Conditions: 150 mM KOAc, 10 mM MgCl2 and 150 mM bicine (pH 8.5), 24 C. An RNA of 207 nucleotides, treated with DMS and 2A3 and read out base by base.

RNA sequence: GGGAACGACUCGAGUAGAGUCGAAAAGGGGGCGACCGGCUUCGACGCAGGUCGCGAAGCCUUCGGUGCAUGCAGAGCUGCGGUUCGCUCUUAAAACUGGUCGCAGAUUCAUAAUUGCCAACGACAGCAAUUACGCUCUCGCUGCUUAAGCAGUGAGGUCAAAGGAGAAGUUCGCUUCUCCUUUGACAAAAGAAACAACAACAACAAC
Reactivity to DMS in 0.01 (KOAc 150mM, MgCl2 10mM, bicine 150mM(pH8.5), 24C), signal-to-noise 2, nucleotides 027 to 156: g000g010g040g030g010c020g000a030c020c020g020g000c040u000u010c120g010a170c100g030c040a080g010g040u010c040g040c030g000a030a090g040c020c010u000u010c040g070g050u010g010c040a110u000g030c050a120g000a120g000c010u000g000c070g030g020u000u000c140g030c050u000c050u000u010a030a040a080a070c030u000g000g000u000c000g020c000a140g010a090u000u000c090a070u000a040a030u000u000g020c050c040a060a150c160g000a120c130a060g000c010a030a010u010u000a020c030g000c150u000c000u000c000g060c000u000g040c020u000u010a150a180g000c020a050g000u010g000a020g000
Reactivity to 2A3 in 0.01 (KOAc 150mM, MgCl2 10mM, bicine 150mM(pH8.5), 24C), signal-to-noise 4, nucleotides 027 to 156: g020g000g000g010g010c010g000a000c000c000g010g020c020u120u090c070g100a130c090g000c070a020g030g090u060c000g000c010g000a010a010g020c010c000u040u060c060g100g020u090g020c060a060u070g020c030a020g000a010g000c010u010g000c030g050g010u050u090c120g000c010u020c000u080u080a000a020a010a010c020u030g020g000u020c010g000c010a010g060a110u150u160c020a040u060a090a010u010u010g000c020c020a140a030c130g100a080c070a030g000c000a000a010u040u020a070c110g000c040u010c000u000c020g000c000u010g000c010u260u200a210a010g000c000a000g010u010g010a010g000